This 177-nucleotide RNA was probed chemically with 2A3 and DMS. DMS (dimethyl sulfate) methylates the pairing face of unpaired adenines and cytosines. Reactivities are given for positions 27 through 126.

RNA sequence: GGGAACGACUCGAGUAGAGUCGAAAAUGUGGUCGGCACAGUGGCGAGGUUUGUUGAGGAGAAGGCUGGGCUAGGUGCGCUACUCGACCUGGUCUCCAGUGUCUAUCGGGAACUUGCUCUCGACGAGAGAGUUUAUUCUGUUCGCAGAAUAAACUCUAAAAGAAACAACAACAACAAC
Reactivity to 2A3 in 0.01 (KOAc 150mM, MgCl2 10mM, bicine 150mM(pH8.5), 24C), signal-to-noise 2, nucleotides 027 to 126: u140g020u040g040g000u090c010g010g040c020a040c030a100g010u030g050g000c020g020a020g000g050u050u100u110g090u060u080g060a070g040g040a070g010a100a030g140g000c030u010g020g010g000c030u020a010g020g010u110g080c050g000c050u080a090c040u030c050g040a030c010c020u000g030g020u020c090u000c050c010a000g000u020g060u040c020u040a100u070c000g020g010g030a010a050c030u030u110g010c000u000c010u020c020g060a040c070g000a020g010
Reactivity to DMS in 0.01 (KOAc 150mM, MgCl2 10mM, bicine 150mM(pH8.5), 24C), signal-to-noise 5, nucleotides 027 to 126: u010g030u010g010g010u000c050g020g010c060a060c110a070g020u010g020g010c030g010a070g010g010u000u000u010g010u010u010g010a150g000g010a070g000a080a060g000g010c040u000g000g010g000c020u000a020g010g010u000g020c080g020c150u000a050c080u010c030g010a040c030c020u000g000g000u000c060u010c010c020a050g020u000g010u000c030u010a130u000c030g020g000g010a050a090c090u000u000g020c070u010c020u000c030g000a070c130g010a160g000